[RMDB]
RNA sequence: GGGAACGACUCGAGUAGAGUCGAAAAGUAAACCCACUGAUGCUUUGUGCCUCACCCGCAAAGUAGGCAUCACUCCCGGCAACUUCUUUAUAAAAUGCGUUGGAGACACCGGGAGUCUGGGGAUCAAGAUCAGUUAACGAUUCGUCGUUAACUGAUCAAAAGAAACAACAACAACAAC
Reactivity to DMS in 0.01 (KOAc 150mM, MgCl2 10mM, bicine 150mM(pH8.5), 24C), signal-to-noise 4, nucleotides 027 to 126: g020u000a060a110a230c000c000c010a060c220u010g020a010u000g000c000u000u010u020g000u010g010c040c030u000c270a160c180c170c260g000c050a030a070a120g000u000a030g010g010c010a010u000c020a170c010u010c000c000c000g000g030c040a170a190c060u000u010c000u000u000u000a140u010a110a070a100a100u000g020c180g010u010u000g000g010a040g000a100c280a070c010c000g000g020g000a030g000u000c050u000g010g000g000g000a120u030c120a090a140
Reactivity to 2A3 in 0.01 (KOAc 150mM, MgCl2 10mM, bicine 150mM(pH8.5), 24C), signal-to-noise 3, nucleotides 027 to 126: g040u030a020a120a100c000c020c000a010c070u040g000a000u020g000c010u010u040u080g050u050g010c000c020u050c030a080c000c000c010g000c020a030a040a080g090u060a030g070g000c010a010u030c000a000c000u020c010c010c030g020g010c060a080a060c030u020u030c000u070u300u080a220u100a170a170a100a100u180g100c070g090u070u120g030g000a030g020a030c020a010c030c000g000g000g010a000g000u000c000u030g000g000g000g000a010u130c050a070a030
An RNA of 177 nucleotides, treated with DMS and 2A3 and read out base by base. The RNA was probed in 150 mM KOAc, 10 mM MgCl2 and 150 mM bicine (pH 8.5) at 24 C.